Structure probing data (2A3 and DMS) for a 177-nucleotide construct. The DMS profile rests on 39,238 reads.
RNA sequence: GGGAACGACUCGAGUAGAGUCGAAAAGCGCCGGCUGGGCGUCGACGCGCAACCUGAUGAUCGAGGGCGAGAACCUCGAGGUGCUGAAGCUGCUGCAGAAGAGCUACGCGGGGCGCGUGAAGCUCGAGACCUAUUAUACUUUCGAGUAUAAUAGGUCAAAAGAAACAACAACAACAAC
Reactivity to 2A3 in 0.01 (KOAc 150mM, MgCl2 10mM, bicine 150mM(pH8.5), 24C), signal-to-noise 9, nucleotides 027 to 126: g020c030g030c010c020g070g090c080u140g040g080g030c020g040u020c020g040a020c020g010c000g000c010a050a100c010c020u070g060a120u090g020a020u060c020g000a010g010g030g000c100g080a160g040a150a050c000c000u000c010g000a010g010g050u110g000c040u040g020a060a020g010c030u160g010c030u070g010c040a030g040a250a010g010a040g010c010u030a020c040g020c010g020g030g040g010c030g000c000g010u020g050a060a010g000c010u010c020g030a050
Reactivity to DMS in 0.01 (KOAc 150mM, MgCl2 10mM, bicine 150mM(pH8.5), 24C), signal-to-noise 9, nucleotides 027 to 126: g010c060g020c020c030g020g010c070u010g010g010g020c040g020u000c050g010a070c060g010c020g010c050a090a100c040c010u000g010a120u010g010a130u000c020g010a030g000g010g000c060g010a160g000a160a120c010c000u000c010g010a020g010g010u000g010c030u000g010a150a100g010c030u000g010c050u010g020c090a080g010a140a090g000a070g010c020u000a080c110g010c030g000g010g010g010c060g010c020g010u000g010a090a100g010c010u000c010g010a300